[RMDB]
An RNA of 207 nucleotides, treated with 2A3 and read out base by base.
RNA sequence: GGGAACGACUCGAGUAGAGUCGAAAAGCUGCAGUUCGUCGAGGGUCAUCGCGCGGGUGGGCUUGCGCUGCUCGGUGCGGAUGGUGGUGUCGCGAACUGGGUUGCGGUCGACGGCGUCGUGCUGUGCUGCGAGGGUCAUCAUCCCGGAUAGAACGACCGUAUUGGAUGGGUUCGCCCAUCCAAUACGAAAAGAAACAACAACAACAAC
Reactivity to 2A3 in 0.01 (KOAc 150mM, MgCl2 10mM, bicine 150mM(pH8.5), 24C), signal-to-noise 3, nucleotides 027 to 156: g030c010u210g020c000a010g000u000u020c040g080u110c050g090a010g050g100g030u050c010a000u020c010g020c000g000c050g020g010g030u260g070g050g070c030u150u080g030c230g000c040u020g000c000u000c030g080g090u160g030c070g160g020a020u010g000g060u010g040g190u160g030u020c000g030c000g000a010a020c010u000g000g010g020u180u080g070c050g010g000u040c090g050a030c030g040g010c040g020u240c070g030u230g030c020u040g020u040g060c000u010g010c010g040a050g030g000g020u020c010a080u020c020a030u050c060c000c000g000g050a120u120a050g070a080a080c080g000a030c050

The reactions ran in a buffer of 150 mM KOAc, 10 mM MgCl2 and 150 mM bicine (pH 8.5), at 24 C. The data come from the RNA Mapping Database (RMDB), library OK3TST. For 2A3, 1,286 sequencing reads were counted. 2A3 adducts were read by reverse transcription with SuperScript II with manganese.